[RMDB]
RNA sequence: GGGAACGACUCGAGUAGAGUCGAAAAAACUUAGGAAGGACACAUACCACUUACUGAGCAAUUUUGACAUUAUUUAUUGUAAUCAUAAUUAUUACAUGGUCAACACAAUUAAGAAAUUACCAUUAACAUGUUAGUACCCGUUCGCGGGUACUAACAUAAAAGAAACAACAACAACAAC
Reactivity to DMS in 0.01 (KOAc 150mM, MgCl2 10mM, bicine 150mM(pH8.5), 24C), signal-to-noise 2, nucleotides 027 to 126: a080a070c030u060u000a060g030g010a010a060g030g020a150c110a110c040a120u090a110c180c060a060c000u010u000a000c030u000g020a010g000c110a040a070u000u100u000u010g000a030c040a020u030u000a190u030u000u020a030u000u000g000u000a000a010u000c080a080u010a080a050u120u040a020u000u000a030c050a000u010g000g000u000c050a040a070c300a000c250a020a090u000u000a020a100g000a060a020a020u000u000a030c000c010a040u030u000a030a140c140
Reactivity to 2A3 in 0.01 (KOAc 150mM, MgCl2 10mM, bicine 150mM(pH8.5), 24C), signal-to-noise 1, nucleotides 027 to 126: a000a000c020u020u030a040g000g200a060a000g080g000a030c000a000c000a160u280a250c090c000a150c000u000u090a050c000u000g000a000g000c050a080a090u090u000u090u020g000a130c140a140u000u120a180u300u270u090a100u050u000g000u000a000a000u110c010a000u080a300a070u160u000a060u000u000a050c000a110u070g010g000u090c000a010a010c000a000c040a050a130u140u300a070a010g010a000a010a000u020u120a090c010c010a000u040u040a040a110c000